[RMDB]
RNA sequence: GGGAACGACUCGAGUAGAGUCGAAAAAUCCCCGGGGAAACCUGGAGGAAGUCCGACGAGAUCGCGGCUGGGGCUUAGGACCCCACUCCUGCGAGACAGGAGUAAUCCUAAACAGGGUUUUCACCCUUCUUAGUAUCUAGUUCGCUAGAUACUAAGAAAAAGAAACAACAACAACAAC
Reactivity to 2A3 in 0.01 (KOAc 150mM, MgCl2 10mM, bicine 150mM(pH8.5), 24C), signal-to-noise 4, nucleotides 027 to 126: a010u050c000c010c010c000g000g000g000g010a030a030a020c000c000u020g020g020a040g060g030a030a020g030u000c030c000g040a140c030g070a200g060a220u190c050g010c050g020g000c020u010g010g000g000g000c010u010u040a050g070g060a200c010c000c000c000a000c010u000c000c000u000g030c050g220a170g020a100c000a000g000g000a000g010u020a010a020u000c000c010u010a020a010a010c030a020g030g010g030u040u040u050u060c100a220c010c000c000u000
Reactivity to DMS in 0.01 (KOAc 150mM, MgCl2 10mM, bicine 150mM(pH8.5), 24C), signal-to-noise 3, nucleotides 027 to 126: a120u000c010c000c010c130g020g010g000g010a050a040a090c000c010u000g000g000a120g020g010a060a040g010u030c010c000g000a150c060g010a170g020a120u000c030g010c070g010g000c080u000g010g010g000g000c020u010u010a020g000g000a060c000c010c010c010a040c000u000c000c000u000g000c030g010a120g010a240c010a020g000g010a030g000u000a070a030u000c000c000u000a000a010a060c160a010g000g010g000u000u000u000u000c050a100c020c010c040u000